[RMDB]
RNA sequence: GGGAACGACUCGAGUAGAGUCGAAAAAGAGAGCGCCAAAAAGAUCGAUCGAUCGUUUGAACGCGCAAGUUUAAGUUUGAUACGGGCAUACUAGCUAGCUAGCUAGCAAAACAAACUUAAUAAAGAAGUGUUAAUAGCUAUUCGUAGCUAUUAACACAAAAGAAACAACAACAACAAC
Reactivity to 2A3 in 0.01 (KOAc 150mM, MgCl2 10mM, bicine 150mM(pH8.5), 24C), signal-to-noise 3, nucleotides 027 to 126: a000g170a000g010a020g000c000g010c000c000a020a030a000a040a020g000a000u010c020g060a100u180c180g000a010u000c060g050u010u030u060g020a080a030c030g000c000g000c020a010a010g000u000u040u010a010a000g000u000u020u010g100a100u110a120c050g050g050g040c060a040u060a140c020u010a010g000c000u020a030g130c030u050a010g000c010u010a010g010c040a030a070a000a010c010a000a000a000c000u010u020a010a000u080a090a130a030g140a210a020
Reactivity to DMS in 0.01 (KOAc 150mM, MgCl2 10mM, bicine 150mM(pH8.5), 24C), signal-to-noise 8, nucleotides 027 to 126: a110g010a150g000a140g010c000g020c020c030a020a080a030a030a060g000a010u000c000g010a140u010c220g000a010u000c000g000u000u000u000g000a110a100c220g000c000g000c040a100a080g010u000u000u000a010a010g000u000u000u000g020a080u010a110c170g000g000g020c140a130u000a110c010u000a010g000c010u000a160g010c190u000a070g010c000u000a010g000c030a020a060a080a100c000a000a010a010c000u000u000a010a020u000a040a070a100g010a080a100
An RNA of 177 nucleotides, treated with 2A3 and DMS and read out base by base. The data come from the RNA Mapping Database (RMDB), library M2PK90. For DMS the reverse transcriptase was MarathonRT.